[RMDB]
RNA sequence: GGGAACGACUCGAGUAGAGUCGAAAAGGGGGUGAUCGGUUUCGACUUCGAUGGUUGUUGUAGGGGAAGCGGGCCGAGGAGAGCGGACGCAGCCUCGUUAAAAAUGCGACCGCGAAAAAAUAAGUGCCAACUCUAAGCGCACUGAGUUCGCUCUCGCGAUAUCGCUUACCUUCGGGUAAGCGAUAUCAAAAGAAACAACAACAACAAC
Reactivity to 2A3 in 0.01 (KOAc 150mM, MgCl2 10mM, bicine 150mM(pH8.5), 24C), signal-to-noise 1, nucleotides 027 to 156: g020g000g000g000g000u040g030a050u030c000g000g000u060u060u090c070g030a090c060u150u010c080g130a080u230g090g000u050u020g000u030u000g030u070a070g030g030g010g000a010a050g020c040g000g020g000c000c020g040a050g030g010a000g000a020g000c000g000g000a000c010g010c010a050g050c000c010u000c000g030u020u040a180a160a100a030a080u100g000c010g010a010c000c070g000c010g000a120a040a000a000a000a000u180a000a030g010u000g000c010c000a050a070c080u060c050u170a000a000g010c080g000c120a020c010u020g000a040g000u010u020c010g000c050u000c000u010c030g020c000